The record gives the reactivity of an RNA of 177 nucleotides to DMS and 2A3. Values cover nucleotides 27 to 126. The DMS profile rests on 2,419 reads. Conditions: 150 mM KOAc, 10 mM MgCl2 and 150 mM bicine (pH 8.5), 24 C. The data come from the RNA Mapping Database (RMDB), library TTRDEL.
RNA sequence: GGGAACGACUCGAGUAGAGUCGAAAAGAUAUGGACAGCGAUGAAACGAUUGCCUUGGACCUCGGAAACGAGCUAGGCACUCGUGGAGCUGUCCUAAGUCAAACGUGAAGACUUCGGUCUUCACGAAGAUUGCUACAAGCUUCGGCUUGUAGCAAUCAAAAGAAACAACAACAACAAC
Reactivity to DMS in 0.01 (KOAc 150mM, MgCl2 10mM, bicine 150mM(pH8.5), 24C), signal-to-noise 3, nucleotides 027 to 126: g020a030u000a300u000g000g010a010c020a010g010c010g010a160u010g000a110a150a030c010g000a040u000u000g000c010c000u000u000g050g000a130c300c010u000c000g000g010a100a070a160c020g010a010g000c040u000a000g010g020c010a000c050u000c010g010u000g000g000a050g010c000u010g010u000c000c000u000a010a060g040u000c000a050a100a290c000g010u000g000a000a000g010a020c000u010u000c210g020g000u000c000u000u000c000a000c000g000a030a050
Reactivity to 2A3 in 0.01 (KOAc 150mM, MgCl2 10mM, bicine 150mM(pH8.5), 24C), signal-to-noise 3, nucleotides 027 to 126: g000a030u080a040u150g000g000a000c000a000g030c010g300a300u030g030a080a030a000c010g010a000u020u020g000c000c010u050u090g090g110a270c040c000u000c020g010g030a050a070a070c000g010a020g000c020u010a000g000g000c010a000c000u000c010g000u010g010g000a000g000c010u030g000u000c000c000u000a020a010g040u010c040a060a020a020c000g000u000g010a000a000g010a010c000u060u140c300g100g000u000c000u000u000c010a000c000g000a000a020